[RMDB]
This 207-nucleotide RNA was probed chemically with 2A3. For 2A3, 548 sequencing reads were counted. Reactivities are given for positions 27 through 156. For 2A3 the reverse transcriptase was SuperScript II with manganese.
RNA sequence: GGGAACGACUCGAGUAGAGUCGAAAAAUUGGUCCAGAACUGAUAAUAUCUAUAUACCAAUCUCUAGAAGUAUAUUGACAAUAUUCAUUUAAUACAGAACAUGGAUUUUUAUCCUUCCAUGCCAAUAUCUUCUCAUAAGGUAUUGUGUCUCCAAAUACAAACUGAUUACCUUCGGGUAAUCAGUUUGAAAAGAAACAACAACAACAAC
Reactivity to 2A3 in 0.01 (KOAc 150mM, MgCl2 10mM, bicine 150mM(pH8.5), 24C), signal-to-noise 2, nucleotides 027 to 156: a000u000u020g020g000u000c000c000a000g010a030a040c010u050g030a040u090a270a040u050a080u010c000u010a020u000a000u000a000c010c040a090a040u050c080u010c030u160a050g000a060a030g000u000a000u020a010u050u030g030a030c030a060a090u110a050u140u060c010a050u000u120u290a140a050u160a020c010a100g140a170a000c000a060u000g080g000a020u080u110u020u030u100a100u090c030c060u070u030c080c010a100u110g020c010c000a010a000u020a000u000c030u070u000c060u000c130a170u250a270a000g000g030u010a000u010u060g030u020g090u040c060u010c090c000a010a050a080u270a150